[RMDB]
Chemical mapping of a 177-nucleotide RNA with 2A3 and DMS. 2A3 adducts were read by reverse transcription with SuperScript II with manganese. DMS adducts were read by reverse transcription with MarathonRT. The RNA was probed in 150 mM KOAc, 10 mM MgCl2 and 150 mM bicine (pH 8.5) at 24 C.
RNA sequence: GGGAACGACUCGAGUAGAGUCGAAAAGAUAUGGAUCAGGGCAGGGAGAGACUUAUCGGAAACGAUAAUUCUCGAGGAUCUGUUUGAUCCUAAGUCAAAGUUCGAGUUUGUUCGCAAACUCGAACAAGUCGUAUUCCUAGUUCGCUAGGAAUACGACAAAAGAAACAACAACAACAAC
Reactivity to 2A3 in 0.01 (KOAc 150mM, MgCl2 10mM, bicine 150mM(pH8.5), 24C), signal-to-noise 2, nucleotides 027 to 126: g020a000u040a000u090g000g010a010u000c040a050g140g120g060c010a000g010g050g080a130g000a010g020a040c010u010u000a000u000c000g000g020a020a010a010c000g000a000u010a020a000u030u010c000u010c010g050a080g070g010a090u010c000u010g030u040u010u070g000a000u040c010c010u000a020a000g010u000c060a230a100a040g010u030u000c010g000a000g000u000u020u030g090u030u060c170g010c180a000a010a010c000u020c020g000a000a010c000a000a000
Reactivity to DMS in 0.01 (KOAc 150mM, MgCl2 10mM, bicine 150mM(pH8.5), 24C), signal-to-noise 2, nucleotides 027 to 126: g010a000u000a050u010g000g000a010u000c000a020g010g010g010c010a000g000g010g000a060g020a020g000a010c300u000u000a000u000c010g020g000a030a020a050c000g000a010u000a020a000u010u000c000u000c010g010a100g000g020a050u000c000u000g000u000u000u010g000a010u000c000c000u010a010a070g000u000c030a120a140a180g000u010u000c010g000a050g010u000u000u000g020u000u010c210g020c000a000a000a000c010u000c000g000a000a010c000a050a050